[RMDB]
RNA sequence: GGGAACGACUCGAGUAGAGUCGAAAAACUAGGAUACGUCCUAGAACAGGCAUGCUGGGGUCCCGCCAGCGGCGCCUGGCGGCGGCUCGACCUUUUGAGCGCCCCCGACACCGGACGGGACAUGGAAAACAGCACAAACAUUCGUGUUUGUGCUGUUAAAAGAAACAACAACAACAAC
Reactivity to DMS in 0.01 (KOAc 150mM, MgCl2 10mM, bicine 150mM(pH8.5), 24C), signal-to-noise 2, nucleotides 027 to 126: a100c020u020a000g010g000a020u000a020c220g000u000c000c000u000a010g020a130a050c020a040g010g010c020a100u040g000c010u020g000g000g000g000u010c030c010c000g000c000c000a000g060c000g010g010c190g000c060c010u000g000g060c140g010g000c080g010g020c000u000c010g000a040c200c090u010u010u040u000g010a010g020c020g000c000c020c020c000c040g000a210c130a050c170c080g000g000a130c070g000g000g000a080c070a200u050g010g000a070a060
Reactivity to 2A3 in 0.01 (KOAc 150mM, MgCl2 10mM, bicine 150mM(pH8.5), 24C), signal-to-noise 3, nucleotides 027 to 126: a000c010u010a030g000g020a010u050a130c230g100u050c000c000u010a000g020a020a010c010a000g000g010c030a020u130g020c010u020g000g000g020g020u000c000c000c010g010c000c000a020g000c030g040g010c100g020c000c000u040g010g000c100g030g000c060g140g040c040u050c050g090a120c040c000u070u100u060u300g030a010g000c010g000c000c000c000c010c020g020a020c030a070c080c080g100g100a030c020g000g000g000a010c010a050u100g070g020a100a200

An RNA of 177 nucleotides, treated with DMS and 2A3 and read out base by base. It was measured as part of the RMDB library RFM100. For 2A3, 1,912 sequencing reads were counted. The DMS profile rests on 2,435 reads. The reactions ran in a buffer of 150 mM KOAc, 10 mM MgCl2 and 150 mM bicine (pH 8.5), at 24 C.